[RMDB]
RNA sequence: GGGAACGACUCGAGUAGAGUCGAAAAACGCCCCAAACGAUUUAAUCAAACUUGAUAGUUUAGUCUGGCCACGGGUCAACCGUGCGGGGCAUGAGUUGCGUCGAGAGAGCGUUAAUGCACUGGAGGCCGAAAAGGGAGGGUUCGCCCUCCCUUUUCGAAAAGAAACAACAACAACAAC
Reactivity to DMS in 0.01 (KOAc 150mM, MgCl2 10mM, bicine 150mM(pH8.5), 24C), signal-to-noise 1, nucleotides 027 to 126: a140c140g040c030c010c000c050a010a300a030c060g010a070u010u080u000a150a080u010c170a010a150a020c040u000u000g030a160u030a010g020u010u000u000a100g000u000c060u010g000g020c050c020a090c160g010g030g000u000c150a110a070c080c000g000u020g020c300g020g000g010g030c010a040u000g000a120g040u000u000g020c010g080u010c000g000a300g000a110g010a080g030c000g010u010u000a090a140u000g000c060a120c050u000g000g020a220g000g030c070

Structure probing data (DMS) for a 177-nucleotide construct. The reactions ran in a buffer of 150 mM KOAc, 10 mM MgCl2 and 150 mM bicine (pH 8.5), at 24 C.